The record gives the reactivity of an RNA of 207 nucleotides to DMS and 2A3. It was measured as part of the RMDB library M2RFPK. For DMS, 5,898 sequencing reads were counted.

RNA sequence: GGGAACGACUCGAGUAGAGUCGAAAACGGUUACGCCUUCUUUACCGUUAUCAAGGAAGGUACUCGGCCAUGCUAAGGGAAGCAUUAUUCCUUAGGCGCAUGUCGCCGCCAGCAUGGUGUGAUGGGAAAAAGUAUGCUGGGUUCGCCCAGCAUACAACCUAUAAAAAUACUUCGGUAUUUUUAUAGGAAAAGAAACAACAACAACAAC
Reactivity to DMS in 0.01 (KOAc 150mM, MgCl2 10mM, bicine 150mM(pH8.5), 24C), signal-to-noise 2, nucleotides 027 to 156: c010g000g000u000u010a020c020g000c010c000u000u000c010u010u000u000a040c010c010g020u000u010a030u000c120a030a040g010g020a010a000g010g040u000a070c040u000c010g050g060c000c000a020u000g020c000u010a160a120g000g020g010a030a040g010c220a100u000u010a170u000u000c010c010u000u000a090g000g030c020g030c040a140u020g010u010c020g030c010c000g000c080c090a040g020c030a030u000g010g020u000g020u000g000a100u000g000g000g010a080a060a120a150a160g010u000a000u000g010c020u010g010g000g020u000u010c300g030c020c000c000a040g010c010a000u000a000c010a040a090
Reactivity to 2A3 in 0.01 (KOAc 150mM, MgCl2 10mM, bicine 150mM(pH8.5), 24C), signal-to-noise 6, nucleotides 027 to 156: c010g020g000u030u040a020c060g010c000c010u010u010c000u010u040u040a020c020c020g200u130u100a050u100c050a020a000g030g000a000a000g000g000u050a060c040u020c020g030g010c010c000a000u010g000c010u060a070a060g020g000g020a020a010g030c070a170u100u140a120u200u130c000c000u040u080a080g000g000c000g010c040a140u230g110u300c020g000c020c000g020c040c040a010g000c000a010u010g000g050u030g070u100g030a160u150g040g050g110a030a080a020a020a040g000u000a000u000g000c000u000g000g000g030u010u020c050g070c020c000c010a000g000c000a000u000a000c000a000a000
2A3 adducts were read by reverse transcription with SuperScript II with manganese.